[RMDB]
RNA sequence: GGGAACGACUCGAGUAGAGUCGAAAAUGAUUGGCGCAGGGGUACGGACCUCAGCUGAAUCAUGGGAGCUGAAUGUAUGUGUGUCUCUGCCCUCCUGCAUGUGGCAGGUUGAUGGGGAGCACUUACAUAGCACGCUUCUUUUCGAAGAAGCGUGCUAAAAAGAAACAACAACAACAAC
Reactivity to DMS in 0.01 (KOAc 150mM, MgCl2 10mM, bicine 150mM(pH8.5), 24C), signal-to-noise 1, nucleotides 027 to 126: u000g010a030u000u030g070g000c060g000c190a050g000g000g030g000u000a050c300g060g000a170c000c010u000c060a110g000c040u000g000a000a080u000c020a040u030g070g070g000a260g050c020u000g010a060a100u030g000u030a000u000g000u000g010u000g000u020c000u000c000u000g010c050c100c100u000c000c000u000g010c000a060u050g020u020g010g000c000a000g000g010u060u020g000a000u040g010g000g000g000a240g000c000a040c000u020u000a020c100a030
Reactivity to 2A3 in 0.01 (KOAc 150mM, MgCl2 10mM, bicine 150mM(pH8.5), 24C), signal-to-noise 1, nucleotides 027 to 126: u040g010a000u000u050g030g000c070g000c080a100g060g000g000g020u050a000c120g060g100a020c000c000u000c000a030g000c000u040g160a000a040u040c020a000u010g000g080g010a050g030c100u130g070a100a010u000g010u020a010u020g020u000g000u040g300u090c000u000c000u010g060c000c000c000u090c000c000u000g000c010a100u300g060u120g260g000c000a000g000g000u000u040g030a030u020g000g000g000g000a020g000c010a000c000u000u000a000c000a060
The record gives the reactivity of an RNA of 177 nucleotides to DMS and 2A3. Reactivities are given for positions 27 through 126. The DMS profile rests on 1,357 reads. For 2A3 the reverse transcriptase was SuperScript II with manganese. For DMS the reverse transcriptase was MarathonRT. For 2A3, 684 sequencing reads were counted.